The record gives the reactivity of an RNA of 177 nucleotides to 2A3 and DMS. For 2A3 the reverse transcriptase was SuperScript II with manganese. For DMS, 6,531 sequencing reads were counted. DMS adducts were read by reverse transcription with MarathonRT. The RNA was probed in 150 mM KOAc, 10 mM MgCl2 and 150 mM bicine (pH 8.5) at 24 C. Source: RMDB library TTRDES, as collected in RNAgym.
[RMDB]
RNA sequence: GGGAACGACUCGAGUAGAGUCGAAAAGAUAUGGAUCCCUGAGGGAGAAGGCCAUCGGAAACGAUGGUCCUUCGAGGAUCUCAGUGGAUCCUAAGUCAAAAUCCAAUGGCGUUCGCGCCAUUGGAAACUAUCCAAGAGUGUUCGCACUCUUGGAUAGAAAAGAAACAACAACAACAAC
Reactivity to 2A3 in 0.01 (KOAc 150mM, MgCl2 10mM, bicine 150mM(pH8.5), 24C), signal-to-noise 2, nucleotides 027 to 126: g000a000u020a000u060g010g000a000u000c010c000c000u000g010a010g020g030g020a100g010a010a010g000g010c000c000a000u000c000g000g010a010a010a010c000g010a000u000g000g000u010c030c000u010u000c000g000a000g010g010a000u000c000u000c000a040g010u260g090g000a000u000c000c000u000a000a000g010u000c010a040a030a010a300u000c000c000a000a000u010g000g020c020g050u070u090c300g020c010g010c150c000a000u000u000g000g000a020a000a000
Reactivity to DMS in 0.01 (KOAc 150mM, MgCl2 10mM, bicine 150mM(pH8.5), 24C), signal-to-noise 3, nucleotides 027 to 126: g000a010u000a060u010g000g010a010u010c000c000c000u000g010a030g020g000g010a000g000a020a000g000g000c010c000a000u000c000g020g000a010a020a040c010g020a010u000g010g000u010c050c010u000u000c000g010a080g020g000a040u000c000u000c010a000g020u030g030g000a000u000c000c000u000a000a050g000u000c010a110a100a170a210u000c010c000a000a020u000g010g010c000g030u010u020c300g030c010g030c000c000a000u010u000g010g000a000a020a130